An RNA of 177 nucleotides, treated with 2A3 and read out base by base.

RNA sequence: GGGAACGACUCGAGUAGAGUCGAAAAUCACUUUAGGAUAGCGUUCUGCAUAUUUAGAGUGUAUGCCUACCCAGAGUAGGAAACCCAGCAAGUAUGCGUCGCUUCCACCUUGAACUUAAGGGUUCAAGCGGUUCAGUGCAUUCGUGCACUGAACCGCAAAAGAAACAACAACAACAAC
Reactivity to 2A3 in 0.01 (KOAc 150mM, MgCl2 10mM, bicine 150mM(pH8.5), 24C), signal-to-noise 2, nucleotides 027 to 126: u100c030a020c130u100u180u200a070g020g000a060u110a060g000c000g070u090u070c070u140g000c000a000u030a050u020u030u100a140g010a030g080u080g010u000a010u190g050c000c000u000a000c000c000c000a110g010a070g020u000a000g000g010a000a000a030c020c040c000a010g060c070a000a010g000u000a000u020g020c000g000u000c000g040c000u000u000c000c000a040c000c000u000u000g000a000a000c000u030u030a090a090g130g000g000u030u000c030a030a000

For 2A3 the reverse transcriptase was SuperScript II with manganese.